[RMDB]
RNA sequence: GGGAACGACUCGAGUAGAGUCGAAAACGGGUUUCCUUCCUCUGCUUGCGGCCUCGCCCGGAGUCUUCGAAUCCAGCGCAGGUUCUGACGCGACCGGUGGCACGCCGAGUCGCUCACUGCCUCAACCUCCUUUUUCUACUUCUAGCUUGGUCUCCGGCUGAAGAGAACAGUUCGCUGUUCUCUUCAGAAAAGAAACAACAACAACAAC
Reactivity to 2A3 in 0.01 (KOAc 150mM, MgCl2 10mM, bicine 150mM(pH8.5), 24C), signal-to-noise 2, nucleotides 027 to 156: c020g050g010g020u020u050u090c000c000u030u050c040c010u070c050u050g020c030u080u070g060c090g050g020c000c020u020c070g030c010c030c010g050g020a040g020u050c060u070u130c100g050a100a080u040c030c030a060g000c030g000c080a020g070g000u130u030c040u030g030a030c110g000c000g010a010c010c010g000g040u050g070g200c130a040c130g010c000c010g050a100g000u020c010g000c010u010c000a030c010u020g010c000c000u040c050a070a100c050c000u080c020c000u040u060u040u020u090c010u040a080c020u100u040c020u040a050g050c030u040u020g050g020u020c010u000c000c000g040g000